[RMDB]
RNA sequence: GGGAACGACUCGAGUAGAGUCGAAAAAUCUUCCUGACGCAUCGAGAUGAUGUGGCGGAGCACGCCAAGUGGGCCAAGGCGCUCGGUGCGGAGCGCAUCAUGCAUGUCGGGGAGACCAACGCGCAGCCAUCCAAAGGUACUUCGGUACCUUUGGAUGAAAAGAAACAACAACAACAAC
Reactivity to 2A3 in 0.01 (KOAc 150mM, MgCl2 10mM, bicine 150mM(pH8.5), 24C), signal-to-noise 5, nucleotides 027 to 126: a000u000c010u020u000c000c000u000g030a020c030g050c040a060u100c120g140a110g020a300u190g000a010u010g010u030g140g000c000g040g090a080g080c070a010c040g040c050c030a140a090g160u280g060g070g000c030c070a200a150g170g000c070g000c010u010c000g050g020u050g010c030g020g020a010g000c010g000c000a020u030c020a020u090g100c030a040u170g010u010c000g000g010g010g000a010g010a000c020c020a080a040c040g020c010g000c060a020g090c030
Reactivity to DMS in 0.01 (KOAc 150mM, MgCl2 10mM, bicine 150mM(pH8.5), 24C), signal-to-noise 6, nucleotides 027 to 126: a160u010c030u000u000c010c000u000g000a040c020g020c080a060u000c120g010a160g000a120u010g010a020u000g010u000g010g010c020g000g020a300g020c100a080c030g000c070c090a090a100g020u000g010g010g010c020c050a160a140g010g010c060g020c000u000c010g010g040u000g000c020g010g010a200g010c020g010c010a040u010c050a050u000g010c050a100u010g020u000c000g020g010g010g000a020g000a040c040c040a090a090c080g000c050g000c060a090g020c160

Chemical mapping of a 177-nucleotide RNA with 2A3 and DMS.
For 2A3, 7,150 sequencing reads were counted.
For 2A3 the reverse transcriptase was SuperScript II with manganese.